RNA sequence: GGGAACGACUCGAGUAGAGUCGAAAAAGCGAAUAUGUUCUAUGUGGUGGUGGUUACUACGUCAAACCUGGAGGUACCAGUAGCGGAGAUGCCACCACUGCAUAUGCCAAUAGUGUCUUUAACAUUUAAAGGGAGGAGUUCGCUCCUCCCAAAAGAAACAACAACAACAAC
Reactivity to 2A3 in 0.01 (KOAc 150mM, MgCl2 10mM, bicine 150mM(pH8.5), 24C), signal-to-noise 5, nucleotides 027 to 129: a000g030c010g010a080a010u160a050u120g070u060u060c030u010a000u000g010u030g000g000u000g000g010u010g020g000u030u050a100c000u000a010c020g090u120c100a090a120a160c020c010u000g000g010a110g160g080u150a150c000c000a000g000u030a010g000c000g000g000a010g010a010u070g000c000c000a000c000c000a000c000u010g000c010a000u010a000u020g000c010c000a070a000u080a070g110u080g020u140c050u020u100u050a110a060c040a090u120u080u110a110a080a010
Reactivity to DMS in 0.01 (KOAc 150mM, MgCl2 10mM, bicine 150mM(pH8.5), 24C), signal-to-noise 5, nucleotides 027 to 129: a050g030c050g020a080a090u040a060u030g020u020u050c080u010a010u010g030u000g000g060u030g000g000u000g000g000u020u090a050c020u000a030c010g030u040c020a070a130a030c300c020u040g000g000a230g020g050u090a140c020c000a040g000u060a230g020c000g000g000a080g010a300u030g020c000c000a030c010c000a000c020u000g020c000a000u030a030u000g000c300c060a020a040u020a050g000u000g000u030c050u030u000u010a060a040c130a140u020u010u040a120a070a130